[RMDB]
RNA sequence: GGGAACGACUCGAGUAGAGUCGAAAAUUUGACAAGCCCAUAUUACAUGGAUUAUGUACAUUUGGAUUUUCUGCCAGGCAUGUAUUACAGAAGUUUGCAGAUAAUGAUGCAUCAAGAUUCAAGGCAACUGCUGGUAAUCAUUCGUGAUUACCAGCAGAAAAGAAACAACAACAACAAC
Reactivity to DMS in 0.01 (KOAc 150mM, MgCl2 10mM, bicine 150mM(pH8.5), 24C), signal-to-noise 2, nucleotides 027 to 126: u020u010u030g010a180c140a100a120g020c040c000c020a070u010a040u000u000a060c060a060u000g030g010a080u000u020a070u010g010u000a030c120a040u010u000u000g000g000a140u000u000u000u000c040u000g000c070c040a040g010g060c100a050u000g030u000a030u000u000a090c140a080g040a140a060g020u010u000u000g020c010a040g010a040u000a050a070u010g010a090u000g010c040a060u020c050a060a200g000a080u000u010c050a050a080g030g020c140a070a140
Reactivity to 2A3 in 0.01 (KOAc 150mM, MgCl2 10mM, bicine 150mM(pH8.5), 24C), signal-to-noise 1, nucleotides 027 to 126: u120u030u170g080a010c080a050a000g010c000c040c000a040u090a040u010u180a020c020a000u110g140g000a070u110u120a030u260g070u030a020c040a140u000u060u000g150g000a040u120u080u050u070c010u040g060c070c000a050g000g000c040a030u090g020u270a170u150u130a030c010a010g060a070a040g080u070u130u000g030c010a000g020a070u040a030a090u070g060a000u050g020c010a000u020c000a030a000g020a040u170u060c020a040a040g050g000c020a130a040